RNA sequence: GGGAACGACUCGAGUAGAGUCGAAAACCUCUCUGCCGUCAACGCUCUCUUCUUCAUCACCCAGAAGAACGAGGUCGCCUUCAGACCCGAGGACCUUCACAUCUCCUACCUCCCCUAUGCCCACAUCCUGAACUAAGUACUUCGGUACUUAGUUCAGAAAAGAAACAACAACAACAAC
Reactivity to 2A3 in 0.01 (KOAc 150mM, MgCl2 10mM, bicine 150mM(pH8.5), 24C), signal-to-noise 2, nucleotides 027 to 126: c010c000u000c000u030c010u030g050c020c040g050u020c050a070a040c040g000c000u010c000u000c010u050u010c000u060u020c030a110u070c010a050c010c040c000a020g010a050a000g020a050a030c050g020a040g000g050u050c020g040c020c040u080u070c030a070g020a110c000c000c040g040a060g000g060a070c020c000u060u040c050a030c000a100u040c030u000c040c010u000a120c010c010u030c020c020c000c000u040a050u150g040c010c000c000a080c010a060u060c030
Reactivity to DMS in 0.01 (KOAc 150mM, MgCl2 10mM, bicine 150mM(pH8.5), 24C), signal-to-noise 4, nucleotides 027 to 126: c020c010u010c060u000c050u000g010c040c030g010u000c040a070a110c100g000c040u010c020u000c030u000u000c020u000u010c030a070u010c090a140c060c040c030a120g000a050a050g010a030a060c150g000a050g020g010u000c030g000c070c040u000u000c090a100g000a140c070c020c020g010a130g010g020a090c050c030u000u010c050a060c110a090u010c040u000c010c020u010a140c030c010u000c000c010c000c040u000a090u010g020c000c000c000a080c180a080u000c100

Overview:
An RNA of 177 nucleotides, treated with 2A3 and DMS and read out base by base. For DMS the reverse transcriptase was MarathonRT. It was measured as part of the RMDB library OK2TST. Conditions: 150 mM KOAc, 10 mM MgCl2 and 150 mM bicine (pH 8.5), 24 C. For 2A3 the reverse transcriptase was SuperScript II with manganese.